RNA sequence: GGGAACGACUCGAGUAGAGUCGAAAAGAUAUGGAUCAGAGGGAGCUACGUGUCGGAAACGACACCUAGCGACGAUCUCUAUCCUAAGUCAAACCCUGGUACGGUGCUUCGGCACCGUACCAGGGAAGAUUCAAACAAUGUUCGCAUUGUUUGAAUCAAAAGAAACAACAACAACAAC
Reactivity to DMS in 0.01 (KOAc 150mM, MgCl2 10mM, bicine 150mM(pH8.5), 24C), signal-to-noise 2, nucleotides 027 to 126: g010a040u010a290u010g000g000a010u000c210a030g010a010g000g000g000a030g030c000u000a010c300g010u000g000u000c010g010g010a050a100a140c000g000a010c000a000c000c030u000a010g010c000g020a100c230g010a020u000c000u000c010u000a050u000c000c010u010a060a110g000u000c020a120a090a180c010c000c010u000g000g020u000a010c000g000g000u000g000c020u000u010c190g020g000c000a000c000c000g030u020a010c020c000a000g010g010g020a000a000
Reactivity to 2A3 in 0.01 (KOAc 150mM, MgCl2 10mM, bicine 150mM(pH8.5), 24C), signal-to-noise 2, nucleotides 027 to 126: g000a000u070a020u140g000g010a020u050c170a100g000a010g010g000g020a020g030c000u000a000c030g000u000g020u000c020g050g000a070a040a050c000g010a000c000a000c010c010u000a000g000c040g040a050c000g000a010u010c000u030c000u020a000u000c000c010u030a130a040g030u030c000a080a060a300c000c000c010u000g050g000u000a010c060g000g050u000g030c040u050u210c300g120g010c030a010c040c030g010u020a000c020c000a000g020g000g010a000a010